[RMDB]
RNA sequence: GGGAACGACUCGAGUAGAGUCGAAAAUACGACGCUCUGCUGGAUGCCAUGGUGCCGCUCGGUACCCAGUGCGUGCUCGACGUCGGGUGCGGCGACGGGUUGCUGGCUGCCCGGCUGGCUCGGCGCAGAUGCGUUGCAUGUUCGCAUGCAACGCAUCAAAAGAAACAACAACAACAAC
Reactivity to 2A3 in 0.01 (KOAc 150mM, MgCl2 10mM, bicine 150mM(pH8.5), 24C), signal-to-noise 5, nucleotides 027 to 126: u230a040c060g040a030c020g010c010u010c020u070g020c020u020g100g060a170u130g010c000c010a040u130g100g000u160g020c010c030g030c060u110c070g000g050u060a060c040c020c000a030g030u090g120c030g050u040g030c010u020c030g180a210c080g070u160c010g030g020g020u110g100c040g040g010c020g030a090c040g010g040g000u080u120g010c010u020g050g000c010u050g010c000c000c000g020g000c010u010g010g000c000u010c020g030g010c030g020c040a020
Reactivity to DMS in 0.01 (KOAc 150mM, MgCl2 10mM, bicine 150mM(pH8.5), 24C), signal-to-noise 2, nucleotides 027 to 126: u020a070c150g000a050c070g010c020u010c030u000g020c000u000g020g010a060u030g000c010c010a110u060g000g000u020g030c010c040g010c030u010c150g050g000u000a000c080c000c000a110g020u000g010c090g040u030g000c010u020c030g000a250c180g030u000c010g000g020g030u040g000c000g030g030c020g010a070c070g010g040g000u010u000g040c010u000g000g000c020u000g000c030c000c000g000g000c040u010g010g030c000u000c080g000g000c060g000c090a090